[RMDB]
Background
Chemical mapping of a 177-nucleotide RNA with 2A3 and DMS. For 2A3 the reverse transcriptase was SuperScript II with manganese.

RNA sequence: GGGAACGACUCGAGUAGAGUCGAAAAGAUAUGGAGCUACACUGGAGCUAUUCAGCUGUCCAUGGUCGGAAACGACCAUGGGAACUCGGCAAAUCUUAUAGCGUUGAAAGUGUGAGCUCCUAAGUCACACCCAUAAUGAGUUCGCUCAUUAUGGGUGAAAAGAAACAACAACAACAAC
Reactivity to 2A3 in 0.01 (KOAc 150mM, MgCl2 10mM, bicine 150mM(pH8.5), 24C), signal-to-noise 2, nucleotides 027 to 126: g010a000u040a040u040g000g010a000g000c010u060a020c030a020c000u010g070g050a000g040c000u020a040u090u210c170a050g020c060u040g060u080c000c010a000u020g000g010u020c000g000g000a010a040a040c000g000a020c000c010a020u000g000g000g000a020a030c060u000c060g050g000c050a160a170a120u110c160u260u300a030u030a120g040c020g180u230u040g030a040a030a000g010u000g030u110g050a020g000c000u000c000c000u020a010a000g010u000c000a010
Reactivity to DMS in 0.01 (KOAc 150mM, MgCl2 10mM, bicine 150mM(pH8.5), 24C), signal-to-noise 2, nucleotides 027 to 126: g000a010u000a230u020g000g010a020g040c000u000a020c010a040c020u000g000g000a060g020c000u000a030u000u010c300a190g000c030u000g020u020c000c000a000u000g010g000u000c000g000g000a030a010a100c000g010a030c000c000a000u000g000g000g000a040a040c300u010c070g000g000c050a110a090a080u030c220u000u000a040u000a030g020c020g030u000u010g000a120a140a020g000u000g000u000g010a020g010c010u000c000c000u000a000a030g010u000c030a300